Chemical mapping of a 177-nucleotide RNA with DMS and 2A3. The 2A3 profile rests on 19,908 reads. The RNA was probed in 150 mM KOAc, 10 mM MgCl2 and 150 mM bicine (pH 8.5) at 24 C. For DMS the reverse transcriptase was MarathonRT.
[RMDB]
RNA sequence: GGGAACGACUCGAGUAGAGUCGAAAAGAUAUGGACGAUUCUAGGGAGGACCAUCGGAAACGAUGGCCCGAGGAUCUAGACUGUCGUCCUAAGUCAAAACCGAUGGGAGGUUCGCCUCCCAUCGGAAGAUAAGUCUUAUGUUCGCAUAAGACUUAUCAAAAGAAACAACAACAACAAC
Reactivity to DMS in 0.01 (KOAc 150mM, MgCl2 10mM, bicine 150mM(pH8.5), 24C), signal-to-noise 7, nucleotides 027 to 126: g000a040u000a300u000g000g010a020c000g010a030u010u000c000u000a010g000g000g010a050g000g020a010c000c000a010u000c010g010g000a120a080a170c010g000a010u000g000g010c000c000c000g000a040g010g000a030u000c010u000a020g000a040c300u010g010u000c000g010u000c000c000u000a020a090g000u010c050a110a050a140a110c000c000g010a010u000g010g000g010a010g020g010u000u010c250g010c000c000u000c000c000c000a000u000c000g010g000a010a030
Reactivity to 2A3 in 0.01 (KOAc 150mM, MgCl2 10mM, bicine 150mM(pH8.5), 24C), signal-to-noise 4, nucleotides 027 to 126: g020a010u060a040u160g000g000a010c010g000a010u050u040c010u000a000g020g020g000a020g000g010a020c010c010a000u000c000g010g000a070a020a040c010g000a000u000g000g020c000c010c010g020a080g000g020a010u010c010u000a000g010a020c180u180g020u110c000g000u000c000c000u020a100a030g050u040c040a000a020a150a190c010c000g000a000u000g010g010g000a020g040g030u070u190c300g130c040c000u000c000c000c000a000u000c000g010g010a000a000